[RMDB]
RNA sequence: GGGAACGACUCGAGUAGAGUCGAAAACUAAGGAGCGUGUGCUGGCGGCGGUCCUUCACGGUGCGUUGAUCGGGGCGGAUUACCAGUACGUGCGCGAGUGGUGUGCGCUGCUCCGAGCAACGGAAAAGGUUGUGCCCUCGUUCGUGGGGGCACGACCAAAAGAAACAACAACAACAAC
Reactivity to 2A3 in 0.01 (KOAc 150mM, MgCl2 10mM, bicine 150mM(pH8.5), 24C), signal-to-noise 6, nucleotides 027 to 126: c020u030a020a050g060g000a040g030c010g000u060g010u040g010c020u010g020g000c000g000g000c000g000g040u020c010c000u020u040c040a020c050g070g020u090g020c000g000u010u010g020a020u010c010g000g000g000g000c010g010g010a030u030u080a040c010c000a010g050u060a020c010g020u040g000c010g000c000g010a030g070u080g020g020u020g010u020g020c070g000c000u010g000c000u000c000c000g000a000g000c010a000a010c000g010g020a040a070a010a030
Reactivity to DMS in 0.01 (KOAc 150mM, MgCl2 10mM, bicine 150mM(pH8.5), 24C), signal-to-noise 3, nucleotides 027 to 126: c030u010a080a070g010g010a060g010c040g020u010g010u020g010c000u000g000g010c070g010g010c030g000g000u000c020c020u000u010c080a080c090g000g010u010g000c030g010u000u000g000a080u000c030g000g000g000g000c010g010g000a110u030u030a060c060c020a030g010u030a100c050g020u010g010c000g010c030g000a150g010u010g000g010u000g010u020g010c110g000c020u000g000c000u000c000c010g000a040g000c060a020a010c010g000g010a060a060a090a090